[RMDB]
RNA sequence: GGGAACGACUCGAGUAGAGUCGAAAACAGCGAUAAGCAUGAUAGCUGAGGCAGAGCAGAAGGGUCUGAUCAAGCCUGGUGACACUCUUGUGGAAGCAACCUCUGGCAACACAGGAAUUGCUCUCGCCUCUCGAUUCACGUUCGCGUGAAUCGAGAGAAAAGAAACAACAACAACAAC
Reactivity to DMS in 0.01 (KOAc 150mM, MgCl2 10mM, bicine 150mM(pH8.5), 24C), signal-to-noise 1, nucleotides 027 to 126: c130a190g040c020g000a090u010a180a110g010c040a160u000g030a090u000a110g010c090u000g000a040g000g000c000a060g000a120g050c010a030g010a110a210g000g000g010u010c040u000g010a050u000c140a110a160g000c050c030u000g000g020u000g020a070c300a090c110u000c010u000u000g000u000g010g000a090a120g010c050a100a060c100c050u000c040u000g020g000c010a060a220c060a040c000a000g000g000a040a060u000u000g000c000u000c050u010c140g010c060
Reactivity to 2A3 in 0.01 (KOAc 150mM, MgCl2 10mM, bicine 150mM(pH8.5), 24C), signal-to-noise 1, nucleotides 027 to 126: c000a020g060c000g030a070u070a220a020g000c030a010u140g060a100u150a090g030c090u050g000a020g030g020c060a020g030a000g040c060a000g050a080a020g120g000g040u050c020u040g060a150u070c020a010a050g000c000c020u050g000g040u180g020a030c020a000c040u020c010u030u070g000u020g050g000a170a050g040c000a040a080c070c080u170c070u170g020g010c030a060a000c060a000c020a020g020g040a040a020u030u050g010c000u000c000u000c010g020c000
Overview
An RNA of 177 nucleotides, treated with DMS and 2A3 and read out base by base. The 2A3 profile rests on 968 reads.